The record gives the reactivity of an RNA of 177 nucleotides to DMS and 2A3. For 2A3, 2,431 sequencing reads were counted. The RNA was probed in 150 mM KOAc, 10 mM MgCl2 and 150 mM bicine (pH 8.5) at 24 C. It was measured as part of the RMDB library TTRDES. High 2A3 reactivity points to a flexible backbone, as in loops and unpaired stretches. DMS adducts were read by reverse transcription with MarathonRT. The DMS profile rests on 1,747 reads.
RNA sequence: GGGAACGACUCGAGUAGAGUCGAAAAGAUAUGGAUAAUCCAGGACAUGCAACGAUUCGGAAACGAAUCGUAUUGCAACAGCCUGUGAUUAUCCUAAGUCAAACUGUCCCGGUUCGCCGGGACAGAACAAGAGCAAUAGCUUCGGCUAUUGCUCUUGAAAAGAAACAACAACAACAAC
Reactivity to DMS in 0.01 (KOAc 150mM, MgCl2 10mM, bicine 150mM(pH8.5), 24C), signal-to-noise 2, nucleotides 027 to 126: g010a020u000a170u010g000g000a040u010a010a010u000c000c010a000g010g020a090c080a120u010g010c000a030a030c010g000a010u000u010c000g010g000a030a030a060c000g030a000a010u000c000g010u000a040u010u010g010c000a100a120c280a280g000c000c000u000g010u020g020a000u000u000a000u000c000c000u000a030a060g010u000c020a130a160a200c010u000g010u000c000c000c000g010g020u000u000c280g000c000c000g020g000g000a010c000a000g000a030a150
Reactivity to 2A3 in 0.01 (KOAc 150mM, MgCl2 10mM, bicine 150mM(pH8.5), 24C), signal-to-noise 1, nucleotides 027 to 126: g010a010u020a000u070g000g000a000u000a010a010u000c000c000a000g070g000a080c120a300u300g010c020a020a010c010g020a010u000u010c000g000g020a000a030a020c000g000a000a010u020c010g000u030a100u000u170g000c010a110a150c070a200g010c020c000u020g000u150g020a030u010u010a000u000c000c000u000a010a000g020u000c010a120a110a160c000u000g000u000c050c060c030g000g000u070u060c280g000c020c010g040g000g000a010c000a000g000a010a000